The record gives the reactivity of an RNA of 177 nucleotides to DMS and 2A3. As a SHAPE reagent, 2A3 marks flexible, mostly unpaired nucleotides at the ribose 2'-OH. For DMS the reverse transcriptase was MarathonRT. The data come from the RNA Mapping Database (RMDB), library M2PK50. Reactivities are given for positions 27 through 126. Conditions: 150 mM KOAc, 10 mM MgCl2 and 150 mM bicine (pH 8.5), 24 C.
RNA sequence: GGGAACGACUCGAGUAGAGUCGAAAAACCUGAUGAUUCGUCAUCAGGUCACAUGCCGCCCGAACGGCUUCCUGACCGGGCGGAUUCACUUUAAAUGGAGCUCUGCUGCAUCAUUCGUGAUGCAGAAUUAGAUGAACAUCUUCGGAUGUUCAUCUAAAAAAGAAACAACAACAACAAC
Reactivity to DMS in 0.01 (KOAc 150mM, MgCl2 10mM, bicine 150mM(pH8.5), 24C), signal-to-noise 4, nucleotides 027 to 126: a030c000c000u010g010a010u000g000a040u000u010c200g010u000c000a000u010c000a010g010g000u000c040a080c160a100u000g010c000c000g010c010c000c030g000a050a190c090g020g000c060u000u000c010c010u000g000a170c200c010g000g000g010c000g010g000a020u000u000c090a080c140u010u000u010a040a080a110u010g000g000a030g010c080u010c200u010g010c010u000g000c000a010u010c000a040u000u010c180g010u000g020a010u000g000c010a000g010a030a110
Reactivity to 2A3 in 0.01 (KOAc 150mM, MgCl2 10mM, bicine 150mM(pH8.5), 24C), signal-to-noise 3, nucleotides 027 to 126: a000c010c000u000g000a000u000g000a000u000u100c190g040u010c090a010u000c010a000g000g000u000c010a050c010a060u120g030c000c010g000c000c000c020g010a040a020c050g100g000c020u200u110c020c000u020g020a030c010c010g020g020g000c020g000g000a030u090u060c060a050c080u140u160u280a110a110a090u160g010g000a010g000c020u030c060u180g050c010u040g000c000a000u000c000a010u000u130c170g090u030g010a000u010g000c000a000g000a000a030